RNA sequence: GGGAACGACUCGAGUAGAGUCGAAAAGAUAUGGAUAACCCGAUAUGCGUCACCAUCGAUCGCACGUAACAUCACGUCGGAAACGACGUGUGGUGCGGGAGGUGACCAUAUCGGGUUAUCCUAAGUCGUCAUGUUAUACCUUCGGGUAUAACAUGACAAAAGAAACAACAACAACAAC
Reactivity to DMS in 0.01 (KOAc 150mM, MgCl2 10mM, bicine 150mM(pH8.5), 24C), signal-to-noise 2, nucleotides 027 to 126: g000a080u000a300u010g000g000a030u000a010a020c000c000c000g000a010u000a000u000g020c300g000u010c020a010c000c010a300u020c190g010a080u010c000g000c000a010c000g010u000a070a210c200a060u000c000a010c000g030u010c000g000g000a130a110a240c010g000a010c000g010u000g020u000g000g030u000g020c010g000g010g010a030g000g040u000g000a030c000c000a000u020a010u000c000g010g000g000u000u010a000u000c000c010u020a020a110g010u000c120